An RNA of 177 nucleotides, treated with DMS and read out base by base.

RNA sequence: GGGAACGACUCGAGUAGAGUCGAAAACUAAUGGUCAGGCAGGGGGGACAGUGUAUGCAAGAGUAAUUUGGAGUUCAUGCCAGCUCUAGCCAGCUUAAUCAGUGGCUGGAUAAAUUGCAGUACUCUACACACAACAUGUCUUCGGACAUGUUGUGUGAAAAGAAACAACAACAACAAC
Reactivity to DMS in 0.01 (KOAc 150mM, MgCl2 10mM, bicine 150mM(pH8.5), 24C), signal-to-noise 1, nucleotides 027 to 126: c040u010a120a080u000g020g000u010c080a050g020g030c050a090g020g000g030g000g000g000a070c100a020g000u010g020u000a070u000g020c010a110a080g020a070g010u030a060a090u010u010u000g030g020a050g040u010u000c040a100u040g010c030c100a060g010c040u010c020u010a060g020c010c030a060g000c050u000u000a160a170u010c290a070g010u000g000g000c010u000g000g000a040u010a010a050a120u000u000g000c000a030g000u000a010c030u000c010u000a190
Conditions: 150 mM KOAc, 10 mM MgCl2 and 150 mM bicine (pH 8.5), 24 C.